[RMDB]
RNA sequence: GGGAACGACUCGAGUAGAGUCGAAAAUCAAAUUCAGUACCUGUCCUAUGCAUGGUAGGCACUGGCCCAGAAGGCUGCCACAGAAACACUGUGACUCAUGGGCCCUGUUCCUGUGUCCCAGGCUCAGCAAUUAGUACCUGUUCGCAGGUACUAAUUGAAAAGAAACAACAACAACAAC
Reactivity to 2A3 in 0.01 (KOAc 150mM, MgCl2 10mM, bicine 150mM(pH8.5), 24C), signal-to-noise 5, nucleotides 027 to 126: u050c020a020a020a060u230u060c030a010g040u030a050c010c000u040g090u140c020c020u130a120u210g060c050a040u090g060g010u040a050g020g000c010a010c060u060g010g000c010c000c010a020g050a050a070g110g050c120u070g030c040c010a010c000a030g060a080a170a020c100a050c100u010g010u030g030a030c010u020c070a050u050g010g020g000c000c010c000u080g020u020u020c010c010u040g030u020g040u020c020c000c000a010g040g030c020u030c080a050g000
Reactivity to DMS in 0.01 (KOAc 150mM, MgCl2 10mM, bicine 150mM(pH8.5), 24C), signal-to-noise 8, nucleotides 027 to 126: u000c110a060a070a090u000u000c060a040g020u000a040c020c010u000g010u010c010c030u000a100u010g020c190a080u010g010g010u000a030g010g010c040a020c030u000g000g010c020c000c010a060g010a150a140g010g010c150u000g010c050c010a020c020a030g000a190a120a090c240a130c030u000g010u000g010a060c020u010c060a130u000g010g000g010c010c030c090u010g000u000u000c020c000u000g010u000g000u000c040c020c010a120g010g010c060u000c110a130g000